[RMDB]
RNA sequence: GGGAACGACUCGAGUAGAGUCGAAAACAGCCGUUCGCGGCUGGUGAGGGAUAUGGAUUAAGUCAAAGUAAUGAACUACGCUCGGGUCGGAAACGAUCUCUAGCGUGGCGCAUUAACCAAGCUUAAUCCUAAGUCAAGUAGACGGAUUCGUCCGUAAGUUGUAAGAUUCAUUCGUGAAUCUUACAACAAAAGAAACAACAACAACAAC
Reactivity to 2A3 in 0.01 (KOAc 150mM, MgCl2 10mM, bicine 150mM(pH8.5), 24C), signal-to-noise 9, nucleotides 027 to 156: c000a000g000c020c000g030u090u130c290g020c010g110g000c000u010g000g040u120g080a190g030g130g010a040u050a040u200g010g000a000u010u010a010a010g050u140c110a300a060a000g010u010a000a000u000g000a020a010c000u010a000c010g000c000u010c020g000g000g000u010c010g010g000a020a030a000c020g000a030u040c200u020c010u090a000g000c000g000u000g000g010c040g000c000a010u000u020a110a090c010c020a060a010g000c000u000u000a000a000u000c000c000u000a080a010g030u020c030a050a050g070u040a060g180a040c010g020g010a060u070u090c190g050u030c070c010g030u060a080a110
Reactivity to DMS in 0.01 (KOAc 150mM, MgCl2 10mM, bicine 150mM(pH8.5), 24C), signal-to-noise 4, nucleotides 027 to 156: c010a030g020c010c010g020u000u010c260g060c020g030g050c000u000g010g000u010g010a130g010g010g000a120u000a290u000g020g010a030u000u000a010a030g020u010c030a080a140a250g010u010a050a030u000g010a060a020c000u000a010c030g030c010u000c160g010g000g020u010c020g030g010a070a050a140c010g020a010u000c010u000c010u000a030g030c010g040u000g010g000c050g000c000a030u000u000a050a060c020c030a140a250g000c000u000u010a010a020u000c000c010u000a020a120g000u000c050a100a190g000u000a120g010a090c000g020g000a130u010u010c140g000u000c000c010g010u010a060a210
An RNA of 207 nucleotides, treated with 2A3 and DMS and read out base by base.
The DMS profile rests on 9,568 reads.
DMS adducts were read by reverse transcription with MarathonRT.
The data come from the RNA Mapping Database (RMDB), library RNAMAK.